[RMDB]
RNA sequence: GGGAACGACUCGAGUAGAGUCGAAAAAUGAUGCUGGGUAUAAGAAAUGCUUCUGAAAAGAGGAAGAGAGACCUUUCGUAUGCAUAUUCAGUUCUGACACAUGCUUGAGUAUGAGAAAGAUGGUGAAUGUUUUGCACAAGUGGAGAUGCAUAAAAUAUCCGAUAGUACGUUUCGACGUACUAUCGGAAAAAGAAACAACAACAACAAC
Reactivity to DMS in 0.01 (KOAc 150mM, MgCl2 10mM, bicine 150mM(pH8.5), 24C), signal-to-noise 1, nucleotides 027 to 156: a080u000g020a080u010g020c050u000g000g010g060u020a060u020a090a220g000a020a080a090u000g010c090u000u070c020u000g000a040a030a080a090g010a100g040g030a170a080g010a140g010a100g000a050c080c030u010u000u000c070g020u000a140u020g000c000a010u000a060u010u000c060a050g000u010u030c090u030g010a300c130a040c040a110u000g010c040u010u070g020a030g010u000a060u000g000a080g010a060a140a070g000a040u000g020g000u000g010a030a040u000g020u000u000u000u000g000c030a100c060a040a120g070u020g030g000a110g050a030u000g000c050a110u010a030a080a040a070u000a100
Reactivity to 2A3 in 0.01 (KOAc 150mM, MgCl2 10mM, bicine 150mM(pH8.5), 24C), signal-to-noise 2, nucleotides 027 to 156: a000u080g010a000u060g000c030u030g000g000g090u110a150u030a130a060g050a050a140a070u150g000c000u040u100c040u070g060a050a090a070a100g080a050g000g070a100a000g040a010g000a020g030a070c010c000u070u050u010c050g050u100a020u080g060c030a000u000a070u160u000c020a020g050u060u030c020u100g060a020c020a000c000a150u090g000c000u020u030g000a020g060u040a040u140g040a040g030a040a050a000g070a000u120g020g070u040g000a020a080u070g010u030u140u070u060g070c020a010c020a020a110g020u030g030g000a030g000a010u040g000c020a020u090a050a050a000a030u270a070
Structure probing data (DMS and 2A3) for a 207-nucleotide construct. Reactivities are given for positions 27 through 156. For 2A3, 710 sequencing reads were counted. It was measured as part of the RMDB library OK3TST. 2A3 adducts were read by reverse transcription with SuperScript II with manganese.